[RMDB]
RNA sequence: GGGAACGACUCGAGUAGAGUCGAAAAGAUAUGGAUCCAACGAUGUUGAACUACUCGACCUCGGAAACGAGACCGAGCAACAUUAGGAUCCUAAGUCAAAAGGAUGCAGUGUUCGCACUGCAUCCAAUCGAUCAUGCUUGUUCGCAAGCAUGAUCGAAAAAGAAACAACAACAACAAC
Reactivity to 2A3 in 0.01 (KOAc 150mM, MgCl2 10mM, bicine 150mM(pH8.5), 24C), signal-to-noise 1, nucleotides 027 to 126: g000a010u090a030u180g020g000a040u040c000c010a020a080c240g020a010u010g010u020u030g020a020a060c100u160a040c000u300c000g020a050c000c000u030c000g000g000a080a020a020c000g000a010g030a040c040c020g000a000g000c010a000a000c000a000u000u060a100g000g000a000u030c010c010u000a110a000g050u010c040a040a000a000a260g010g020a010u020g000c010a000g020u010g060u100u140c200g060c170a010c010u020g000c010a000u000c000c000a000a000
Reactivity to DMS in 0.01 (KOAc 150mM, MgCl2 10mM, bicine 150mM(pH8.5), 24C), signal-to-noise 1, nucleotides 027 to 126: g000a010u000a300u000g010g000a000u000c010c010a110a120c260g010a020u000g000u000u000g010a020a030c040u010a300c000u000c000g000a020c030c000u000c000g000g000a090a020a090c000g000a030g010a020c010c000g000a000g000c010a010a000c000a000u000u000a250g000g000a000u000c000c000u000a000a080g000u020c000a060a070a170a100g020g010a010u000g000c000a000g000u000g010u000u010c220g010c010a000c000u000g030c000a000u000c000c010a020a010
This 177-nucleotide RNA was probed chemically with 2A3 and DMS. It was measured as part of the RMDB library TTRDEL. DMS adducts were read by reverse transcription with MarathonRT. The reactions ran in a buffer of 150 mM KOAc, 10 mM MgCl2 and 150 mM bicine (pH 8.5), at 24 C.